[RMDB]
RNA sequence: GGGAACGACUCGAGUAGAGUCGAAAAGCAUGGCCGCCGUCAGCUCGUACCGUGAGGCGUCCUGUUAAGUCAGGCAACGAGCGAGACCCGCACUCCUAAUUGCCAGCAACACCCUCGUGGUGGUUGGGUUUGGACGUGGAUUCGUCCACGUCCAAACAAAAGAAACAACAACAACAAC
Reactivity to 2A3 in 0.01 (KOAc 150mM, MgCl2 10mM, bicine 150mM(pH8.5), 24C), signal-to-noise 2, nucleotides 027 to 126: g070c040a100u030g020g030c000c000g030c000c050g040u050c040a010g010c000u010c020g000u040a070c030c020g020u070g040a040g120g000c080g030u130c020c010u000g020u010u070a120a160g300u080c040a000g020g040c020a010a040c010g000a000g040c010g000a050g010a090c030c000c000g000c020a000c010u000c000c000u040a110a030u120u060g050c010c010a000g000c010a020a070c000a030c020c020c020u100c110g060u180g000g040u020g010g000u060u020g020g030
Reactivity to DMS in 0.01 (KOAc 150mM, MgCl2 10mM, bicine 150mM(pH8.5), 24C), signal-to-noise 2, nucleotides 027 to 126: g000c100a100u010g000g020c010c020g020c050c050g040u010c010a150g020c010u000c040g040u000a300c000c080g000u060g000a210g010g000c090g050u000c000c000u000g000u000u000a050a150g030u000c020a000g000g000c160a130a040c100g000a020g000c060g070a020g000a110c100c060c000g000c030a100c050u000c000c000u000a140a040u030u010g010c000c040a070g020c070a060a160c070a050c020c020c000u000c260g010u020g030g000u000g020g050u000u000g000g000